[RMDB]
RNA sequence: GGGAACGACUCGAGUAGAGUCGAAAAAACAUCGUCUACAUCAAUGAAUCCAAACUCAGAACACAUAGUGCUCUUGCCCCCACCAGACGGUAUGAUUAUAGCAUACAGUCCGGGGAUCUGGCGAUCCGAUCUCACACUGGUUCGCCAGUGUGAGAUCAAAAGAAACAACAACAACAAC
Reactivity to DMS in 0.01 (KOAc 150mM, MgCl2 10mM, bicine 150mM(pH8.5), 24C), signal-to-noise 1, nucleotides 027 to 126: a010a040c210a080u000c080g000u030c020u000a020c070a090u010c100a090a040u010g000a070a020u000c060c010a050a060a020c080u000c110a070g050a030a030c030a020c030a210u000a130g060u000g000c040u000c000u000u000g000c010c000c000c020c000a180c120c100a040g070a030c020g030g000u000a000u010g060a070u020u000a140u000a060g020c000a000u020a030c010a010g010u010c000c040g010g000g000g000a010u000c010u000g000g000c080g000a000u010c050c030
Reactivity to 2A3 in 0.01 (KOAc 150mM, MgCl2 10mM, bicine 150mM(pH8.5), 24C), signal-to-noise 6, nucleotides 027 to 126: a010a020c090a060u040c020g020u020c040u100a080c030a090u070c030a080a160u150g050a080a020u080c060c030a090a060a140c070u090c090a050g050a150a000c030a000c020a170u150a120g050u040g030c010u020c020u000u070g050c000c000c000c000c000a070c010c010a000g010a000c010g020g000u010a000u010g020a030u060u300a110u190a230g090c000a000u000a010c000a000g000u000c020c000g030g000g000g000a010u010c030u050g030g000c030g010a020u020c030c060
This 177-nucleotide RNA was probed chemically with DMS and 2A3. The RNA was probed in 150 mM KOAc, 10 mM MgCl2 and 150 mM bicine (pH 8.5) at 24 C. For 2A3 the reverse transcriptase was SuperScript II with manganese. The 2A3 profile rests on 4,248 reads.